[RMDB]
Chemical mapping of a 177-nucleotide RNA with DMS. The reactions ran in a buffer of 150 mM KOAc, 10 mM MgCl2 and 150 mM bicine (pH 8.5), at 24 C. DMS adducts were read by reverse transcription with MarathonRT. For DMS, 12,816 sequencing reads were counted. Values are in units of 0.01, from 0 to 300, in steps of 10.
RNA sequence: GGGAACGACUCGAGUAGAGUCGAAAAGAUAUGGAAGAAGGAAAGACUUGAGCGAACGAUAAGUAUCCAUCGGAAACGAUGGAAUACUUUUGACGUUCGUGCUCAAGUCUUUCCUUCUUCCUAAGUCCAUUACAGGCAUGUUCGCAUGCCUGUAAUGAAAAGAAACAACAACAACAAC
Reactivity to DMS in 0.01 (KOAc 150mM, MgCl2 10mM, bicine 150mM(pH8.5), 24C), signal-to-noise 5, nucleotides 027 to 126: g000a100u000a300u010g000g000a020a010g010a020a010g000g010a030a010a010g010a020c000u010u000g000a030g020c000g000a010a010c000g020a150u000a010a010g020u000a020u000c000c000a000u000c010g000g000a140a120a250c010g020a010u000g000g000a050a030u000a010c000u000u000u000u000g000a220c120g000u000u000c010g020u010g020c030u000c000a010a000g000u000c000u000u000u000c000c000u000u000c000u000u000c000c010u000a010a080g000u010c040